[RMDB]
RNA sequence: GGGAACGACUCGAGUAGAGUCGAAAAGAUAUGGACAGCUCUAGGGAGUCGUUGAAAUCGGAAACGAUGGAGACUUCUAGAGGCUGUCCUAAGUCGCAAGCUAUCCACGCUUCGGCGUGGAUAGCAAGUAAGUAUGAGUGUUCGCACUCAUACUUACAAAAGAAACAACAACAACAAC
Reactivity to DMS in 0.01 (KOAc 150mM, MgCl2 10mM, bicine 150mM(pH8.5), 24C), signal-to-noise 5, nucleotides 027 to 126: g000a030u000a300u000g010g010a000c000a010g010c000u000c000u000a040g010g010g020a010g010u000c000g000u000u010g010a080a120a010u000c000g000g010a140a070a200c000g000a010u000g010g010a130g000a010c000u000u000c000u000a010g000a020g020g010c010u000g000u010c000c000u000a010a060g010u000c030g000c240a100a120g000c010u010a000u000c000c010a000c000g000c000u000u010c210g020g010c000g040u000g010g000a000u000a000g000c010a000a050
Reactivity to 2A3 in 0.01 (KOAc 150mM, MgCl2 10mM, bicine 150mM(pH8.5), 24C), signal-to-noise 3, nucleotides 027 to 126: g000a020u050a050u150g000g000a000c000a000g000c000u000c010u050a070g120g160g080a040g030u030c030g070u210u060g000a020a020a010u010c010g010g030a090a040a050c000g000a010u010g000g000a010g000a000c000u010u000c000u000a000g030a040g040g020c000u000g000u010c000c000u000a010a010g020u000c010g050c170a140a030g010c000u000a000u000c000c010a010c000g020c020u080u150c300g130g000c000g010u000g000g000a000u000a000g000c000a000a000